Source information:
The record gives the reactivity of an RNA of 177 nucleotides to 2A3 and DMS. DMS adducts were read by reverse transcription with MarathonRT. The reactions ran in a buffer of 150 mM KOAc, 10 mM MgCl2 and 150 mM bicine (pH 8.5), at 24 C. 2A3 adducts were read by reverse transcription with SuperScript II with manganese.
RNA sequence: GGGAACGACUCGAGUAGAGUCGAAAACACACUGGAGGACCAGUCUCAGCUUUGCUGCGUAACCAGCUGUGUGACUGUGGGCAAGUUAUUUAACCUCUCUGAGCCUAAAUUUUCUCAUUUGUGAAUGAAAGAGGGAAUAGUUCGCUAUUCCCUCUUUAAAAGAAACAACAACAACAAC
Reactivity to 2A3 in 0.01 (KOAc 150mM, MgCl2 10mM, bicine 150mM(pH8.5), 24C), signal-to-noise 1, nucleotides 027 to 126: c020a000c000a010c030u020g030g000a080g040g140a050c000c020a020g050u030c010u000c020a090g000c020u160u140u200g000c000u010g010c000g060u020a040a040c000c000a010g000c080u020g010u030g020u040g070a010c030u080g020u070g050g010g000c000a000a010g000u010u000a120u030u130u040a120a060c010c000u060c000u030c060u010g000a040g030c000c000u040a030a040a100u050u040u060u030c030u030c010a040u050u180u130g050u020g050a080a100u170g030
Reactivity to DMS in 0.01 (KOAc 150mM, MgCl2 10mM, bicine 150mM(pH8.5), 24C), signal-to-noise 9, nucleotides 027 to 126: c030a040c050a040c030u000g000g000a130g010g010a100c130c040a040g010u000c080u010c100a090g020c130u000u010u010g010c020u000g000c150g010u010a120a130c060c030a020g010c140u000g020u000g010u000g000a060c080u000g020u000g010g000g010c040a150a060g000u000u000a060u000u010u010a100a100c100c100u000c030u000c050u010g020a120g010c020c010u000a030a060a140u000u010u000u000c020u010c020a150u010u000u000g020u010g010a120a110u010g000